[RMDB]
RNA sequence: GGGAACGACUCGAGUAGAGUCGAAAAAAUAUGUGCUCUGCAGAUGCGGAUGCUCAGUUGGAUGCUGUGUUAUCAGCCGCUACAGAAACAUAUAGUGGAUUAACACCGGAACAAAAAGCAUACGUACCAAAAAUACCAUCUUCGGAUGGUAUUUUUGAAAAGAAACAACAACAACAAC
Reactivity to DMS in 0.01 (KOAc 150mM, MgCl2 10mM, bicine 150mM(pH8.5), 24C), signal-to-noise 3, nucleotides 027 to 126: a080a030u010a010u010g020u000g010c110u010c020u000g000c040a070g000a080u010g010c000g000g000a020u000g000c000u000c040a060g010u000u000g030g000a160u000g010c040u000g010u010g000u010u000a020u000c060a100g010c000c040g000c010u000a040c070a030g010a060a120a070c090a040u000a090u000a040g030u010g000g020a140u000u020a040a050c060a040c020c060g010g000a080a060c080a030a030a060a060a040g000c090a050u000a080c150g000u000a090c170
Reactivity to 2A3 in 0.01 (KOAc 150mM, MgCl2 10mM, bicine 150mM(pH8.5), 24C), signal-to-noise 2, nucleotides 027 to 126: a000a000u200a040u030g040u030g050c080u020c030u070g050c030a020g020a120u090g000c010g050g000a010u050g000c000u010c010a160g000u060u070g250g020a080u210g040c030u020g030u010g000u080u140a050u070c040a000g040c030c000g000c000u020a040c010a060g090a060a130a000c030a000u140a000u000a120g050u020g050g020a050u000u130a050a000c010a000c020c050g000g020a060a000c040a020a050a010a000a000g080c000a020u030a050c040g020u020a040c050
The record gives the reactivity of an RNA of 177 nucleotides to DMS and 2A3. The reactions ran in a buffer of 150 mM KOAc, 10 mM MgCl2 and 150 mM bicine (pH 8.5), at 24 C.